[RMDB]
RNA sequence: GGGAACGACUCGAGUAGAGUCGAAAAUUCUACCCACUGUUCGAGGAUCUCCUCUCUCUCCUUCGAGGACGGGUUCGCGACGGGUUGGCUCAUCCUGAGACCGGGGAGCUUCGAUGAUCUCUCUAUUCUCUUGAAAGAGGAAGGAGCUCUCGAACGCGCGUCAUAGCGUGUUCGCACGCUAUGACGCAAAAGAAACAACAACAACAAC
Reactivity to 2A3 in 0.01 (KOAc 150mM, MgCl2 10mM, bicine 150mM(pH8.5), 24C), signal-to-noise 1, nucleotides 027 to 156: u120u050c060u110a140c040c000c020a060c090u130g000u020u000c000g020a010g140g090a160u020c000u010c010c000u020c000u000c020u010c000u000c050c020u090u060c060g010a010g000g000a040c020g020g000g000u040u150c030g050c030g100a130c060g050g200g000u070u150g010g000c010u000c010a210u130c060c020u060g080a000g070a120c020c130g000g000g000g010a000g010c040u040u050c050g290a280u140g020a110u060c030u000c000u000c030u030a100u110u070c090u030c000u050u030g020a030a000a030g000a000g030g000a010a020g040g000a000g000c000u000c000u010c000g000a000a020c020g010c050

The record gives the reactivity of an RNA of 207 nucleotides to 2A3. The 2A3 profile rests on 836 reads. 2A3 adducts were read by reverse transcription with SuperScript II with manganese. Source: RMDB library VIROID, as collected in RNAgym.